[RMDB]
RNA sequence: GGGAACGACUCGAGUAGAGUCGAAAAGGUAGCCACUUCGGUGGCUACCAAAGAGAUAGUACCUAUUGAGUUCCUGUGUAGGUACUCAUGACAGGAUGUCAUAAACAUGAUUCUUCGGAAUCAUGAACUGUAUCACAGUCUUCGGACUGUGAUACAGAAAAGAAACAACAACAACAAC
Reactivity to DMS in 0.01 (KOAc 150mM, MgCl2 10mM, bicine 150mM(pH8.5), 24C), signal-to-noise 2, nucleotides 027 to 126: g000g000u000a010g000c000c000a010c000u000u010c260g020g020u000g000g010c000u000a000c000c000a000a050a080g000a140g010a100u000a030g000u000a000c000c000u000a020u000u000g000a130g020u000u000c010c010u000g000u010g000u000a000g020g030u000a020c000u000c300a030u010g000a040c020a170g010g010a190u000g000u000c010a070u000a120a090a240c020a020u000g000a000u000u000c000u000u010c160g020g000a000a020u000c000a000u000g000a050a110
Reactivity to 2A3 in 0.01 (KOAc 150mM, MgCl2 10mM, bicine 150mM(pH8.5), 24C), signal-to-noise 2, nucleotides 027 to 126: g000g000u000a000g000c010c010a010c010u030u060c170g070g010u000g000g010c000u000a020c000c000a030a000a000g020a020g020a020u100a090g000u010a010c000c010u000a020u030u140g100a060g040u040u010c010c030u030g010u040g000u050a000g040g000u010a000c000u000c020a050u060g060a030c000a040g300g140a300u200g030u010c000a040u070a050a130a030c010a000u020g000a000u000u000c000u040u090c260g070g010a000a000u000c010a000u010g010a020a020